[RMDB]
RNA sequence: GGGAACGACUCGAGUAGAGUCGAAAACAUUACGAAUUCGGUCGCAAAUUGUAGAAUUAGCUACUCUACGAUUUAGUGAGCGUUAGUAACGUUGUAAUAUAAUAUAGUCUUUGGAAGGAUUAUAUUGGAGCCGCGGACAAGUUCGCUUGUCCGCGAAGCAGCUUAUACAGUUCGCUGUAUAAGCUGCAAAAGAAACAACAACAACAAC
Reactivity to 2A3 in 0.01 (KOAc 150mM, MgCl2 10mM, bicine 150mM(pH8.5), 24C), signal-to-noise 3, nucleotides 027 to 156: c000a040u040u120a020c020g050a120a150u080u130c020g030g040u010c000g070c000a000a000a000u000u000g000u000a010g020a040a050u080u040a050g040c060u080a040c010u000c000u000a000c000g010a000u000u010u060a100g000u010g010a020g120c000g020u030u060a010g010u010a040a030c040g000u000u020g030u050a130a100u060a060u010a150a000u020a000u000a000g010u000c010u080u070u140g150g070a150a100g020g000a000u010u000a000u000a000u010u050g060g040a050g110c070c030g000c000g000g000a000c000a010a000g000u070u120c160g050c150u000u000g010u000c000c010g000c000g000a000a000
About this RNA:
This 207-nucleotide RNA was probed chemically with 2A3. For 2A3, 1,834 sequencing reads were counted. Reactivities are rounded to 0.1 and cut off at 0 and 3.